[RMDB]
RNA sequence: GGGAACGACUCGAGUAGAGUCGAAAAUUGUGGUUCGGGCAUUCUUAGAGCGGAGGAGACUGCGUGAGGCUGGUUUCACAGAGCAGCGUCCACCUCCCGCUUUCGACGGUGGAAGGAUCACGGGCCGGUGCCUUCUGGGCCCACUAUGACCUAAUAAGGCUCUAAAUAGGUUCGCCUAUUUAGAGCCAAAAGAAACAACAACAACAAC
Reactivity to 2A3 in 0.01 (KOAc 150mM, MgCl2 10mM, bicine 150mM(pH8.5), 24C), signal-to-noise 1, nucleotides 027 to 156: u000u110g000u000g060g050u010u050c010g000g020g070c040a010u150u000c110u120u100a050g000a000g030c000g000g020a030g020g000a000g020a080c120u210g140c060g040u110g000a060g000g100c060u040g040g000u160u080u080c110a140c010a080g050a020g080c030a010g010c030g060u050c060c000a200c060c000u020c000c080c110g000c000u020u100u060c010g020a010c000g000g010u060g000g000a040a050g010g010a010u040c020a010c040g010g030g030c100c060g000g030u060g040c000c000u000u100c040u140g150g000g000c060c140c000a050c000u060a090u160g030a060c010c000u000a010a010u070a100a170

Description:
This 207-nucleotide RNA was probed chemically with 2A3. For 2A3 the reverse transcriptase was SuperScript II with manganese. The RNA was probed in 150 mM KOAc, 10 mM MgCl2 and 150 mM bicine (pH 8.5) at 24 C. The 2A3 profile rests on 515 reads.